[RMDB]
RNA sequence: GGGAACGACUCGAGUAGAGUCGAAAACAGGAAAGAAGUAUACUAUCGUCAUUUUUUUCUCUAGAUCCAGCUACUGCUGAUAAUGAUAGAAUAAACGCUAUUUAUCCGGGUGGUAUACCCAAAAGGGGUGAGAACGUUCCAGAGUGUUUAUCCAGGGCCUUGUAUACUGAUUCGUCAGUAUACAAGGAAAAGAAACAACAACAACAAC
Reactivity to 2A3 in 0.01 (KOAc 150mM, MgCl2 10mM, bicine 150mM(pH8.5), 24C), signal-to-noise 2, nucleotides 027 to 156: c020a050g030g020a060a050a030g020a060a040g040u090a140u100a220c070u110a080u150c000g130u050c080a090u060u040u000u020u000u060u100c070u000c010u070a040g000a110u020c040c030a010g000c010u100a040c070u160g050c000u020g030a030u060a080a050u110g040a020u020a080g080a030a050u110a140a090a040c030g020c040u030a050u020u060u010a030u050c040c020g010g010g000u020g020g010u050a040u030a060c010c030c000a040a080a010a040g050g000g000g010u070g000a030g000a040a030c020g000u030u000c010c010a020g060a030g090u010g030u050u060u070a070u080c050c050a050g020g090g050
Reactivity to DMS in 0.01 (KOAc 150mM, MgCl2 10mM, bicine 150mM(pH8.5), 24C), signal-to-noise 1, nucleotides 027 to 156: c100a100g020g000a100a100a040g000a100a090g010u010a150u020a100c010u000a050u020c000g040u020c060a010u000u000u000u030u000u000u000c040u010c050u000a110g000a060u000c060c030a070g010c040u000a090c110u000g010c050u010g020a090u010a050a050u010g010a060u010a020g000a090a040u000a030a020a070c160g020c070u010a110u000u010u000a070u010c030c040g000g090g000u010g000g020u000a110u000a030c040c010c020a020a020a080a110g000g030g020g050u010g000a080g010a040a060c000g000u010u000c010c020a100g000a110g020u000g000u010u000u000a070u000c040c030a140g020g000g000
This 207-nucleotide RNA was probed chemically with 2A3 and DMS. Conditions: 150 mM KOAc, 10 mM MgCl2 and 150 mM bicine (pH 8.5), 24 C. The 2A3 profile rests on 870 reads. Values cover nucleotides 27 to 156. DMS adducts were read by reverse transcription with MarathonRT. Reactivities are rounded to 0.1 and cut off at 0 and 3. It was measured as part of the RMDB library OK3TST.